[RMDB]
RNA sequence: GGGAACGACUCGAGUAGAGUCGAAAAGGAUCCUUCGUAGUCAGGGUAACUGCCUCGUGUACAGUUACCAGUGGAGACUAGACAAGGUGUCAUCGUACACGAGGAUGACGUCUUCCAUUAAGGAUCGCUACAAGAUAGUAUUCGUACUGUCUUGUAGAAAAGAAACAACAACAACAAC
Reactivity to 2A3 in 0.01 (KOAc 150mM, MgCl2 10mM, bicine 150mM(pH8.5), 24C), signal-to-noise 9, nucleotides 027 to 126: g030g000a000u000c000c000u010u040c070g080u020a020g020u010c030a020g060g000g000u000a000a010c000u010g020c000c020u100c080g110u110g030u070a050c010a010g000u000u010a000c000c010a010g020u030g050g130a130g000a010c000u010a030g020a080c080a030a010g030g000u010g010u010c000a020u010c020g090u120a030c120a020c090g060a060g090g000a010u010g010a000c000g000u000c000u030u000c020c000a060u070u040a010a000g000g000a000u000c000g000
Reactivity to DMS in 0.01 (KOAc 150mM, MgCl2 10mM, bicine 150mM(pH8.5), 24C), signal-to-noise 9, nucleotides 027 to 126: g010g000a010u000c000c000u000u000c170g010u000a030g010u000c020a190g010g010g010u000a010a010c010u000g010c090c030u000c190g010u010g020u000a260c010a010g010u000u000a010c000c000a090g020u010g010g010a180g010a020c020u000a070g010a110c220a040a030g010g000u000g000u000c000a010u000c020g020u010a070c160a080c240g000a070g010g000a010u000g000a020c010g000u000c010u000u000c080c040a110u000u000a030a020g010g000a010u000c010g010
Chemical mapping of a 177-nucleotide RNA with 2A3 and DMS. The 2A3 profile rests on 237,110 reads. 2A3 adducts were read by reverse transcription with SuperScript II with manganese. The RNA was probed in 150 mM KOAc, 10 mM MgCl2 and 150 mM bicine (pH 8.5) at 24 C. The DMS profile rests on 272,908 reads.